[RMDB]
RNA sequence: GGGAACGACUCGAGUAGAGUCGAAAAAUACGGAAUGAGUCCUAUUCGUGCUAUUUUAAGAAACAUAAACAGUCAAAACAGUACUAUAGAUAAUAAUGUUAAAACAAUGCAGAACGGUGGUGUAUUUGGCUUCAUUCAUGGUGGUUCUACAGGAUUACCGUGAAAGUAUUUUCGAAUACUUUCACGGAAAAGAAACAACAACAACAAC
Reactivity to 2A3 in 0.01 (KOAc 150mM, MgCl2 10mM, bicine 150mM(pH8.5), 24C), signal-to-noise 3, nucleotides 027 to 156: a000u140a020c020g020g040a050a040u060g000a030g070u010c020c020u010a090u030u040c040g000u020g000c030u040a090u140u140u020u090a110a070g030a070a110a020c070a040u150a100a100a030c040a050g070u130c100a020a010a130a090c000a020g080u060a000c010u020a030u060a060g060a040u110a110a040u100a060a030u090g020u030u070a030a000a040a040c050a060a110u130g040c040a000g020a110a040c030g040g030u030g010g000u010g000u010a130u030u010u030g050g000c000u050u070c050a060u050u010c020a040u060g010g000u010g000g030u030u010c010u000a040c010a030g010g050a030u200u270a050
Reactivity to DMS in 0.01 (KOAc 150mM, MgCl2 10mM, bicine 150mM(pH8.5), 24C), signal-to-noise 2, nucleotides 027 to 156: a160u000a100c090g010g010a120a040u010g030a110g030u000c050c020u010a100u010u010c050g010u010g010c030u000a100u000u000u010u000a140a150g000a120a040a090c050a130u020a050a110a070c090a080g030u000c050a050a090a060a070c030a060g020u010a070c020u000a110u010a090g010a100u000a030a100u000a060a100u030g010u010u000a030a100a050a060c030a120a100u010g030c040a100g010a020a000c010g030g040u000g020g040u020g000u010a060u000u010u000g010g020c040u010u000c070a060u000u000c020a120u010g000g000u000g000g010u000u000c060u000a040c000a100g000g000a120u010u000a060